Conditions: 150 mM KOAc, 10 mM MgCl2 and 150 mM bicine (pH 8.5), 24 C. Chemical mapping of a 177-nucleotide RNA with 2A3 and DMS. For 2A3, 1,934 sequencing reads were counted. It was measured as part of the RMDB library OK1LIB.
RNA sequence: GGGAACGACUCGAGUAGAGUCGAAAAGAAAGUAGCGAUGCUUGAGUGCAUCAGGCUCAAGCUACCUGAUGCUAAUGGUUUCCACCAUGUACGGAAACCUUGUACGUGGAAAAGCUACGAAAAGAAAGGGAUAAGCAUUGUUCGCAAUGCUUAUCCCAAAAGAAACAACAACAACAAC
Reactivity to 2A3 in 0.01 (KOAc 150mM, MgCl2 10mM, bicine 150mM(pH8.5), 24C), signal-to-noise 2, nucleotides 027 to 126: g120a010a050a000g020u030a000g040c000g030a020u070g000c000u000u000g010a010g000u140g080c090a100u020c010a100g120g000c010u010c040a050a000g000c010u010a060c010c000u060g000a110u010g000c080u100a090a060u120g060g000u000u010u010c010c010a010c040c060a120u100g050u070a010c040g000g050a040a090a020c000c000u020u040g000u000a000c020g010u070g020g010a010a010a080a070g000c020u020a000c070g040a000a120a010a000g140a080a030a020
Reactivity to DMS in 0.01 (KOAc 150mM, MgCl2 10mM, bicine 150mM(pH8.5), 24C), signal-to-noise 2, nucleotides 027 to 126: g020a130a000a040g010u000a000g000c000g020a080u040g000c000u050u000g000a020g010u010g020c100a050u000c300a020g000g000c040u070c040a000a110g020c080u020a090c000c000u000g000a080u000g000c000u000a040a010u050g000g020u000u000u000c000c010a230c140c050a040u020g000u000a150c110g050g070a000a030a030c170c020u000u000g010u000a020c040g000u000g000g000a030a050a080a160g000c000u000a030c010g000a040a040a110a200g030a090a060a050